[RMDB]
RNA sequence: GGGAACGACUCGAGUAGAGUCGAAAAUGAGUGAGAAAGCAUUAAAUUAUUGAUAAAGUAGGCAACAAUGUCAGCAGAAUUACAAUUGCCGGCGGAGAUUUAGGCGCUCCGUGUAAAGCAGUCUCACUCCUCCAACUGACUUCGGUCAGUUGGAGGAAAAAGAAACAACAACAACAAC
Reactivity to 2A3 in 0.01 (KOAc 150mM, MgCl2 10mM, bicine 150mM(pH8.5), 24C), signal-to-noise 2, nucleotides 027 to 126: u050g000a000g000u000g000a000g000a000a000a000g000c050a000u000u200a000a100a080u170u150a010u030u230g040a170u160a190a040a010g140u180a110g030g000c000a020a060c070a120a010u030g030u140c000a040g160c080a040g090a180a170u140u100a000c020a050a300u000u000g020c000c000g000g000c030g030g060a000g000a000u170u130u200a160g020g000c060g010c100u000c000c000g020u030g030u040a000a000a000g000c000a000g000u000c000u000c000a000c000
Reactivity to DMS in 0.01 (KOAc 150mM, MgCl2 10mM, bicine 150mM(pH8.5), 24C), signal-to-noise 1, nucleotides 027 to 126: u000g030a000g000u040g010a040g010a020a030a070g020c030a060u000u000a050a090a300u000u040a240u030u000g000a180u040a030a050a150g060u000a110g030g000c030a040a060c070a030a090u010g040u040c110a180g030c110a050g000a080a130u070u030a010c110a010a130u000u000g010c030c000g000g000c000g000g000a020g040a050u000u060u000a080g030g000c240g020c000u030c000c000g000u000g040u000a000a020a040g040c050a040g000u000c000u000c000a000c020
Chemical mapping of a 177-nucleotide RNA with 2A3 and DMS. For 2A3, 649 sequencing reads were counted.